[RMDB]
RNA sequence: GGGAACGACUCGAGUAGAGUCGAAAACGGUGGAUUCUUCGGAAUCCACCGAAAAAACCUUUGUGAAGUGGACGGUAAUACGUUUAUUUCCCAUUGGGAAAUUAACGUGCCAGUCCCUUCACUCUGGUAAAAAGCCAUUUACUUCGGUAAAUGGCAACUUAUACAUACGUUUCGACGUAUGUAUAAGAAAAGAAACAACAACAACAAC
Reactivity to DMS in 0.01 (KOAc 150mM, MgCl2 10mM, bicine 150mM(pH8.5), 24C), signal-to-noise 2, nucleotides 027 to 156: c030g030g040u000g000g000a020u000u000c000u010u010c300g050g000a040a020u000c000c000a000c000c000g010a010a010a030a100a060a020c010c000u000u000u030g010u010g000a010a010g030u000g100g010a040c000g010g010u000a070a120u000a100c010g030u000u010u000a020u020u000u000c000c000c010a300u000u010g040g040g010a020a010a030u000u010a000a020c010g030u000g020c040c020a110g030u000c010c020c000u000u000c020a020c010u000c040u010g010g020u000a030a070a090a130a090g010c010c010a010u000u000u000a010c010u000u000c300g000g010u010a010a020a010u010g010g030c000a010a000
Reactivity to 2A3 in 0.01 (KOAc 150mM, MgCl2 10mM, bicine 150mM(pH8.5), 24C), signal-to-noise 5, nucleotides 027 to 156: c020g010g000u000g010g010a010u020u000c030u060u090c300g060g010a010a000u000c000c000a000c000c010g000a000a000a000a000a000a000c010c000u010u010u010g020u000g010a020a020g040u200g300g000a000c000g010g010u080a190a100u100a230c000g010u000u000u010a000u000u000u010c020c010c120a300u250u300g000g010g000a000a010a000u030u020a010a010c010g000u000g000c000c040a030g000u000c000c000c000u000u000c000a000c000u000c010u000g010g000u060a100a070a010a050a000g000c000c000a010u000u000u000a000c010u020u080c300g090g000u000a000a000a000u000g000g000c000a000a000